An RNA of 207 nucleotides, treated with DMS and read out base by base. The data come from the RNA Mapping Database (RMDB), library RNAMAK. The RNA was probed in 150 mM KOAc, 10 mM MgCl2 and 150 mM bicine (pH 8.5) at 24 C. Reactivities are rounded to 0.1 and cut off at 0 and 3.

[RMDB]
RNA sequence: GGGAACGACUCGAGUAGAGUCGAAAAACUCGAUAUUCGUAUCGAGUAAAAAUCCUAAGUCGAAGGGAGGGACGAAGCUCGAGGAUCUCGGAAACGAGGGAGAGCUAAGUCCCGAAGAACUUCGAUAUGGAAAAAAACUGUAAGUUCGCUUACAGAAUAUUUCGAAUUAAUUCGUUAAUUCGAAAUAAAAAGAAACAACAACAACAAC
Reactivity to DMS in 0.01 (KOAc 150mM, MgCl2 10mM, bicine 150mM(pH8.5), 24C), signal-to-noise 1, nucleotides 027 to 156: a060c030u000c000g040a000u000a010u000u010c300g030u000a050u000c010g010a030g030u000a000a000a050a070a060u010c000c000u000a030a280g040u010c000g000a050a060g000g030g000a270g030g010g010a000c000g010a300a130g000c000u000c000g030a150g020g030a050u010c000u010c000g030g010a210a080a180c010g010a020g000g000g000a170g000a030g010c000u030a000a300g020u010c000c000c000g010a040a120g000a080a060c060u000u000c010g010a030u000a140u000g030g030a000a000a220a050a120a150a050c000u060g010u000a000a000g000u000u000c300g020c010u010u000a010c000a040g000a150a110